[RMDB]
RNA sequence: GGGAACGACUCGAGUAGAGUCGAAAAAAUCAAUGCUAUUCGUAAAGUACAAAUCCAUUUCAGCACGUAUCUAUGAGUUCUUUGCAAAGAAACAUCCACGUGAGGUGAGGCUUAUUCUCUGCGAAGGGACUACGCGCCGGUUCGCCGGCGCGUAGUCAAAAGAAACAACAACAACAAC
Reactivity to 2A3 in 0.01 (KOAc 150mM, MgCl2 10mM, bicine 150mM(pH8.5), 24C), signal-to-noise 1, nucleotides 027 to 126: a050a000u170c010a000a040u080g000c030u000a010u030u030c000g000u090a060a060a020g090u050a170c040a180a250a000u000c000c000a000u170u170u100c090a130g040c160a000c000g000u090a190u000c030u000a030u000g200a230g000u000u000c000u000u160u160g170c030a000a250a000g000a000a000a000c000a070u000c120c010a030c000g020u050g000a250g030g040u000g000a000g000g000c080u190u000a060u230u000c110u000c000u090g000c000g170a110a050g090g080

An RNA of 177 nucleotides, treated with 2A3 and read out base by base. The 2A3 profile rests on 316 reads. The reactions ran in a buffer of 150 mM KOAc, 10 mM MgCl2 and 150 mM bicine (pH 8.5), at 24 C. It was measured as part of the RMDB library OK1LIB. Values cover nucleotides 27 to 126.